[RMDB]
RNA sequence: GGGAACGACUCGAGUAGAGUCGAAAAGGGUCUGAUGCAUUGGGAUUAAAGGUAAGGAUCAGGGGAGCAGCCCAAGGGGGCAGGAUGCCCAGAUGGCUCUGAGGCUCCCCCAGGCACCGGGAGAGUGAGUACCUGCCUUUUCCCAGCCCCAGGUUGCUAUUAACACACUGUUCGCAGUGUGUUAAUAAAAAGAAACAACAACAACAAC
Reactivity to 2A3 in 0.01 (KOAc 150mM, MgCl2 10mM, bicine 150mM(pH8.5), 24C), signal-to-noise 3, nucleotides 027 to 156: g040g010g000u050c060u060g110a070u130g050c050a070u050u200g020g010g020a020u100u300a040a000a000g040g010u080a120a070g050g000a100u100c090a060g000g020g010g010a010g000c020a010g000c000c050c010a090a120g180g010g020g000g000c000a030g160g080a040u150g010c010c010c000a060g040a110u200g010g020c020u000c060u080g080a110g000g120c000u050c020c000c000c000c000a010g030g130c020a000c010c050g010g090g010a090g000a020g020u020g030a020g060u050a050c000c000u010g000c000c000u020u000u020u010c000c010c000a010g000c030c010c010c010a000g040g000u020u080g060c030
Reactivity to DMS in 0.01 (KOAc 150mM, MgCl2 10mM, bicine 150mM(pH8.5), 24C), signal-to-noise 1, nucleotides 027 to 156: g010g000g040u000c000u040g000a220u010g020c090a140u000u000g010g060g020a080u010u000a030a060a050g040g010u020a050a130g020g010a150u010c100a160g010g000g040g010a070g050c040a130g070c040c000c050a070a190g010g040g000g030g080c020a150g000g000a140u020g020c040c030c040a210g010a100u000g010g010c020u000c070u000g010a220g020g060c000u010c000c000c020c010c060a000g020g000c040a020c010c010g030g070g020a130g010a110g000u010g010a260g010u000a020c030c000u000g000c000c020u000u000u000u000c000c000c000a130g000c000c020c000c000a050g000g000u000u000g000c010